[RMDB]
RNA sequence: GGGAACGACUCGAGUAGAGUCGAAAAAGUUGCGGAGUCAGCGCCGGACUUCCAUCAGGAAGUUAGCAAGGCAAAGGCUUCCUUGAACUCCACUCCGAACACAAAGUCAAGCGGCUCAAGGAUGAAGCGUAUAGGCAGCAUUCGUGCUGCCUAUACGAAAAGAAACAACAACAACAAC
Reactivity to 2A3 in 0.01 (KOAc 150mM, MgCl2 10mM, bicine 150mM(pH8.5), 24C), signal-to-noise 3, nucleotides 027 to 126: a000g130u080u090g020c030g010g000a010g060u030c010a020g010c040g010c040c010g000g020a030c000u000u000c000c040a230u210c090a140g010g000a030a030g030u080u130a070g100c140a200a080g010g000c010a010a030a060g020g000c010u060u030c010c000u010u080g010a030a030c030u110c070c010a000c000u040c060c000g090a200a060c030a000c040a120a080a050g070u130c030a010a080g010c050g020g000c000u010c050a060a090g030g000a090u130g170a080a020g020
Reactivity to DMS in 0.01 (KOAc 150mM, MgCl2 10mM, bicine 150mM(pH8.5), 24C), signal-to-noise 3, nucleotides 027 to 126: a130g030u020u010g010c120g020g020a040g000u000c140a070g000c300g000c000c020g040g000a000c010u000u000c000c000a210u020c220a090g010g000a020a000g010u000u010a100g000c080a160a100g010g020c030a050a300a110g000g000c030u000u020c000c040u000u000g000a060a070c000u000c050c030a040c000u000c010c030g020a060a110c090a110c250a080a140a140g020u010c040a110a030g000c040g000g000c080u020c000a020a010g000g000a050u020g020a080a050g020
An RNA of 177 nucleotides, treated with 2A3 and DMS and read out base by base. 2A3 adducts were read by reverse transcription with SuperScript II with manganese. Conditions: 150 mM KOAc, 10 mM MgCl2 and 150 mM bicine (pH 8.5), 24 C. The 2A3 profile rests on 1,577 reads.